The data come from the RNA Mapping Database (RMDB), library TTRDEL. Structure probing data (DMS and 2A3) for a 177-nucleotide construct. 2A3 adducts were read by reverse transcription with SuperScript II with manganese. For DMS, 9,072 sequencing reads were counted. DMS adducts were read by reverse transcription with MarathonRT. The RNA was probed in 150 mM KOAc, 10 mM MgCl2 and 150 mM bicine (pH 8.5) at 24 C. For 2A3, 26,212 sequencing reads were counted.
RNA sequence: GGGAACGACUCGAGUAGAGUCGAAAAGAUAUGGAGAGGAGCAACAGCUACCUAUCGGAAACGAUAGUGUAGACAUGCUCCCUCCUAAGUCAAAAGCAACGUCAUGAGUUCGCUCAUGACGUUGCAACCAAUUCAAUUUGUUCGCAAAUUGAAUUGGAAAAGAAACAACAACAACAAC
Reactivity to DMS in 0.01 (KOAc 150mM, MgCl2 10mM, bicine 150mM(pH8.5), 24C), signal-to-noise 6, nucleotides 027 to 126: g010a020u000a260u010g000g000a020g000a170g010g000a010g000c000a030a080c300a150g000c000u000a000c000c000u000a010u000c000g010g000a050a050a110c000g010a010u000a000g010u020g000u000a010g020a080c090a150u000g000c010u000c000c000c000u000c000c000u000a000a040g000u000c020a110a080a100a170g010c000a000a000c000g000u000c000a000u010g010a020g010u000u020c280g020c000u000c000a010u000g000a000c000g000u000u000g000c000a030a060
Reactivity to 2A3 in 0.01 (KOAc 150mM, MgCl2 10mM, bicine 150mM(pH8.5), 24C), signal-to-noise 6, nucleotides 027 to 126: g010a010u040a010u080g010g010a030g100a230g030g010a000g000c010a020a190c060a180g060c020u000a000c000c000u000a010u010c000g010g010a040a030a000c010g010a000u010a000g210u250g000u150a000g070a040c010a010u020g000c000u000c000c000c010u000c000c000u010a020a020g020u000c030a050a030a030a110g010c000a000a000c000g000u000c000a000u000g000a000g040u080u220c300g060c150u000c000a000u010g000a000c000g000u000u000g000c000a000a000